[RMDB]
RNA sequence: GGGAACGACUCGAGUAGAGUCGAAAAGCAUUUAGAUCUGCUCGGCAACGGGCUUCUCGUGCAUCCAGCUCAACCGCACCAUCCAUCUGAUUCGACUGAAUGACGCCUCCGGCUGCUGGGAAUCAGAACGCCUAUAGGUCUUCGGACCUAUAGGCGUAAAAGAAACAACAACAACAAC
Reactivity to DMS in 0.01 (KOAc 150mM, MgCl2 10mM, bicine 150mM(pH8.5), 24C), signal-to-noise 1, nucleotides 027 to 126: g000c070a050u000u000u010a120g000a070u020c070u000g000c010u000c000g010g030c070a100a130c050g000g010g000c010u110u000c020u020c060g050u000g000c010a250u000c060c000a040g030c070u020c050a170a150c020c010g000c030a110c020c070a110u000c000c090a090u010c130u000g000a130u020u000c010g000a160c040u010g030a070a010u000g000a030c160g000c030c000u050c050c060g000g020c010u000g000c050u000g000g010g000a000a020u000c120a030g020a150
Reactivity to 2A3 in 0.01 (KOAc 150mM, MgCl2 10mM, bicine 150mM(pH8.5), 24C), signal-to-noise 1, nucleotides 027 to 126: g010c010a030u100u190u140a040g030a060u040c030u170g000c000u000c010g010g010c060a080a040c020g000g000g000c000u080u030c000u010c010g030u060g000c010a030u030c010c000a030g030c020u020c030a050a020c000c020g000c020a020c020c010a040u050c030c020a080u030c000u000g040a060u060u030c020g080a040c110u010g050a040a140u120g020a080c050g030c000c030u080c010c000g040g000c020u010g030c000u020g070g050g000a000a050u070c000a020g000a060

An RNA of 177 nucleotides, treated with DMS and 2A3 and read out base by base. The data come from the RNA Mapping Database (RMDB), library OK1LIB. The RNA was probed in 150 mM KOAc, 10 mM MgCl2 and 150 mM bicine (pH 8.5) at 24 C. For DMS the reverse transcriptase was MarathonRT. DMS (dimethyl sulfate) methylates the pairing face of unpaired adenines and cytosines. For 2A3, 878 sequencing reads were counted.